[RMDB]
RNA sequence: GGGAACGACUCGAGUAGAGUCGAAAAGGUGAUGCUUUUGCAUCACCAGGUACGGAAACGUACCAUACAGACCGAGACAUCAUGCGCCAUCUUUAGGCGGUCUGGGGUCGUAUCCGAAAGUACGAAAGUACGAGGAUACGUCCCAAGCAUGUGUCAACACAUCUCGAAGCUUCGGCUUCGAGAUGUGAAAAGAAACAACAACAACAAC
Reactivity to 2A3 in 0.01 (KOAc 150mM, MgCl2 10mM, bicine 150mM(pH8.5), 24C), signal-to-noise 1, nucleotides 027 to 156: g040g010u000g000a000u010g020c060u080u300u300u300g020c010a000u010c000a000c000c000a000g000g000u000a010c000g010g010a080a110a020c000g010u000a000c000c000a000u120a030c010a000g000a000c000c020g080a050g000a110c020a020u070c000a000u050g030c000g010c000c010a080u160c210u170u160u200a060g000g000c000g000g000u030c000u000g010g010g000g010u000c000g010u000a000u000c010c000g110a140a160a040g000u000a000c000g070a180a040a060g000u000a000c030g000a040g010g000a000u000a000c000g010u010c000c000c000a000a000g020c000a000u000g020u000g080u090c000a100a000